Overview:
This 177-nucleotide RNA was probed chemically with 2A3.

RNA sequence: GGGAACGACUCGAGUAGAGUCGAAAAGUCAGUCAACUAGCAGGACCCGGAAAAGCUAGUGACUGACAAACCGGGUCCACCUCAGAAAAUAAAGUAUCCGAUAAGGAUACAAAAGAAAAGUGAGCAACCAGGGAUUACCAUUCGUGGUAAUCCCUGGAAAAGAAACAACAACAACAAC
Reactivity to 2A3 in 0.01 (KOAc 150mM, MgCl2 10mM, bicine 150mM(pH8.5), 24C), signal-to-noise 1, nucleotides 027 to 126: g000u000c000a010g020u030c020a010a030c090u000a020g000c010a090g000g040a090c000c000c050g090g000a100a100a000a000g000c020u030a040g000u000g010a000c000u000g000a010c000a010a010a010c010c000g000g000g050u010c000c010a030c000c030u000c020a010g060a130a150a050a020u140a040a110a170g000u000a000u000c000c020g010a100u090a300a050g000g000a000u000a000c000a000a050a000a010g030a010a140a010a000g050u050g020a040g000c010a020a050

Conditions: 150 mM KOAc, 10 mM MgCl2 and 150 mM bicine (pH 8.5), 24 C. 2A3 adducts were read by reverse transcription with SuperScript II with manganese. It was measured as part of the RMDB library OK1LIB.